[RMDB]
RNA sequence: GGGAACGACUCGAGUAGAGUCGAAAAGUGUAGGGGGGCUGCAGGUCUGGGCUGGUAUGGGCAUAUGGUGCAGAGAUGUAGCAGGCCAUGCUGCAGGUGAGCUGCUGUACAGACCCCAGGGCGCACACCUAGCUAGUAUAUUCGUAUACUAGCUAGGAAAAGAAACAACAACAACAAC
Reactivity to 2A3 in 0.01 (KOAc 150mM, MgCl2 10mM, bicine 150mM(pH8.5), 24C), signal-to-noise 5, nucleotides 027 to 126: g060u060g050u120a140g020g030g000g000g000g000c020u020g010c020a020g000g060u040c020u060g010g100g000c040u030g000g020u060a040u060g050g050g020c040a030u100a090u220g100g020u040g020c020a010g020a010g000a040u040g020u030a020g080c020a010g020g080c010c010a030u030g000c020u040g020c020a010g010g080u090g030a030g030c020u050g000c010u020g050u050a060c040a050g070a280c010c000c000c020a010g030g040g010c060g000c010a010c010a020
Reactivity to DMS in 0.01 (KOAc 150mM, MgCl2 10mM, bicine 150mM(pH8.5), 24C), signal-to-noise 9, nucleotides 027 to 126: g020u000g020u000a100g020g010g010g010g010g010c040u010g020c050a060g010g000u000c030u000g010g000g020c040u000g010g020u000a040u010g000g010g020c050a090u010a160u010g010g010u010g010c010a030g000a160g010a150u000g020u000a020g010c020a050g000g000c050c060a050u000g010c020u000g000c020a060g010g000u010g010a080g010c020u000g010c030u000g000u000a100c130a090g000a130c050c010c030c030a070g010g000g010c080g010c060a070c150a190
Source: RMDB library OK2TRN, as collected in RNAgym. Chemical mapping of a 177-nucleotide RNA with 2A3 and DMS. For 2A3 the reverse transcriptase was SuperScript II with manganese. For DMS, 22,594 sequencing reads were counted. The RNA was probed in 150 mM KOAc, 10 mM MgCl2 and 150 mM bicine (pH 8.5) at 24 C. For 2A3, 12,495 sequencing reads were counted.